[RMDB]
RNA sequence: GGGAACGACUCGAGUAGAGUCGAAAAUAACAGUGUCCUGGCGUGAAAACGUCAGGCAGUUAGCAAUCACUGUAUGCUAACUGCAUUGUGUGAAAACACAAUGAUGCUGUUUAACAGUGAUUGAUACGAACUUGUGGUAUUUCGAUAUCACAAGUUCAAAAGAAACAACAACAACAAC
Reactivity to DMS in 0.01 (KOAc 150mM, MgCl2 10mM, bicine 150mM(pH8.5), 24C), signal-to-noise 7, nucleotides 027 to 126: u020a000a010c000a010g010u000g010u000c000c010u010g000g000c000g020u010g000a120a060a120a010c000g010u000c000a010g000g010c000a000g000u000u000a000g000c000a040a160u000c000a010c000u000g000u000a180u000g000c000u000a000a000c000u000g010c000a040u000u000g020u000g000u000g000a130a070a140a020c000a010c000a010a000u000g000a010u000g000c000u000g000u000u000u000a070a010c000a010g010u000g000a270u040u020g010a130u030a100c220
Reactivity to 2A3 in 0.01 (KOAc 150mM, MgCl2 10mM, bicine 150mM(pH8.5), 24C), signal-to-noise 9, nucleotides 027 to 126: u070a000a000c000a000g000u000g010u010c000c000u000g000g000c000g000u030g060a090a040a020a020c000g000u000c000a000g000g000c000a000g000u000u000a000g000c000a010a020u060c000a000c000u000g000u020a060u040g000c000u000a000a000c000u000g000c000a000u000u000g000u000g010u000g070a050a020a040a010c000a000c000a000a000u000g000a000u000g000c000u000g000u010u000u030a010a000c000a000g010u010g020a060u070u180g060a050u080a110c130